[RMDB]
RNA sequence: GGGAACGACUCGAGUAGAGUCGAAAAUUCAGCAAUGGAUAGUAUUUACGAAGUCAUGUAAAUCGUAAUAUCUAGAGGAAGGUGAAGUCGUAACAAGGUUUCCGUAGGUGAACCUGCAGAAGGAUCAGUUGCGAGGAUUUUUCGAAAUCCUCGCAACAAAAGAAACAACAACAACAAC
Reactivity to DMS in 0.01 (KOAc 150mM, MgCl2 10mM, bicine 150mM(pH8.5), 24C), signal-to-noise 2, nucleotides 027 to 126: u000u010c000a030g010c160a070a080u100g000g000a090u000a040g020u010a000u000u040u010a000c000g000a100a010g050u040c120a080u030g000u000a070a120a250u000c010g000u010a060a010u000a060u010c140u040a060g000a120g040g000a230a030g000g000u010g000a080a000g000u000c010g000u000a010a070c130a100a080g000g000u000u010u000c030c010g040u030a020g020g080u080g000a020a050c010c000u020g000c100a040g000a070a080g020g040a110u000c080a090
Reactivity to 2A3 in 0.01 (KOAc 150mM, MgCl2 10mM, bicine 150mM(pH8.5), 24C), signal-to-noise 1, nucleotides 027 to 126: u000u000c000a020g080c080a010a130u130g060g000a000u070a020g060u070a080u100u020u000a040c050g080a070a140g160u110c080a140u140g060u300a060a060a040u030c000g000u000a000a000u000a090u210c070u010a000g000a000g140g130a060a000g030g030u000g000a040a040g030u080c070g000u030a020a030c020a210a000g070g180u000u000u050c000c000g100u010a010g060g140u040g060a010a010c000c000u000g020c030a020g070a130a010g040g000a080u060c000a010